[RMDB]
RNA sequence: GGGAACGACUCGAGUAGAGUCGAAAAUACUCACAUUUCGAUGUGAGUAACUGUCUAGUCGCUACCGCCGAUCAAGCGCUAGCGACUAGACUUUAUUGAUCGCCAGCUAACCUUUCGAGGUUAGCAAGUGGAUUAGGUCAUUCGUGACCUAAUCCACAAAAGAAACAACAACAACAAC
Reactivity to DMS in 0.01 (KOAc 150mM, MgCl2 10mM, bicine 150mM(pH8.5), 24C), signal-to-noise 2, nucleotides 027 to 126: u010a010c010u000c000a010c000a010u000u000u010c150g000a040u010g020u000g000a030g000u000a040a060c100u010g020u010c000u000a000g010u000c000g000c000u000a000c190c010g020c000c040g020a130u000c300a110a090g010c030g010c160u000a000g010c000g000a000c000u010a000g000a010c000u010u000u020a110u020u010g000a090u000c100g020c060c050a160g020c000u000a000a010c000c000u000u000u020c180g000a000g010g000u000u000a010g000c000a020a000
Reactivity to 2A3 in 0.01 (KOAc 150mM, MgCl2 10mM, bicine 150mM(pH8.5), 24C), signal-to-noise 2, nucleotides 027 to 126: u040a010c000u020c010a000c000a020u060u100u090c180g130a000u010g000u000g000a000g010u000a030a030c010u000g030u040c000u010a010g000u000c000g000c000u000a020c030c020g000c040c010g200a250u230c160a080a030g020c020g000c010u010a000g000c000g020a000c000u000a000g010a000c000u000u020u000a010u000u040g060a030u080c080g000c140c000a020g000c020u000a010a010c010c010u050u080u190c270g110a000g010g000u010u000a000g000c000a010a020